[RMDB]
The record gives the reactivity of an RNA of 207 nucleotides to DMS and 2A3. Source: RMDB library OK3TST, as collected in RNAgym. The 2A3 profile rests on 1,579 reads. The reactions ran in a buffer of 150 mM KOAc, 10 mM MgCl2 and 150 mM bicine (pH 8.5), at 24 C.
RNA sequence: GGGAACGACUCGAGUAGAGUCGAAAAUGAGCUGGUAGAGCAUAGGACUGGCGAACUUUGGUCGUACCUUGAUGAAGAAGGAAGUUCCUCCUCCGCGGUUAUAUGCGUCCAUCUUACUCUUGUAAAUUUUGACCUCGCCUUCUACCAUAAUGAGCGGCCUAAGCUAUCGGUUCGCCGAUAGCUUAGGAAAAGAAACAACAACAACAAC
Reactivity to DMS in 0.01 (KOAc 150mM, MgCl2 10mM, bicine 150mM(pH8.5), 24C), signal-to-noise 2, nucleotides 027 to 156: u000g000a100g060c120u050g010g040u010a040g020a150g040c080a080u000a070g020g020a070c030u000g080g110c020g010a060a020c060u000u000u000g030g010u000c040g060u000a150c060c020u000u000g030a140u010g030a090a090g030a080a030g000g020a110a190g010u000u000c000c000u000c000c020u000c020c040g040c040g000g030u020u010a030u010a050u010g000c000g000u000c000c020a060u000c030u010u000a050c050u000c030u000u000g000u000a050a030a300u000u000u000u020g020a050c070c010u010c010g000c020c020u000u000c040u000a150c050c040a120u000a060a120u010g010a100g020c020g000g010
Reactivity to 2A3 in 0.01 (KOAc 150mM, MgCl2 10mM, bicine 150mM(pH8.5), 24C), signal-to-noise 3, nucleotides 027 to 156: u150g010a020g030c050u000g010g020u020a020g000a010g090c100a180u140a130g080g030a050c090u080g070g010c010g020a060a040c070u160u120u200g010g010u030c020g050u090a160c000c010u090u060g080a180u080g020a050a030g010a010a020g040g010a060a080g050u050u020c000c010u020c040c020u050c030c030g060c060g020g000u050u070a130u030a040u280g030c010g050u000c010c010a050u000c000u010u050a070c040u080c000u050u060g050u070a030a060a150u140u180u040u120g000a010c000c010u000c040g000c010c000u000u020c000u010a020c010c020a010u080a100a070u100g080a010g020c020g000g030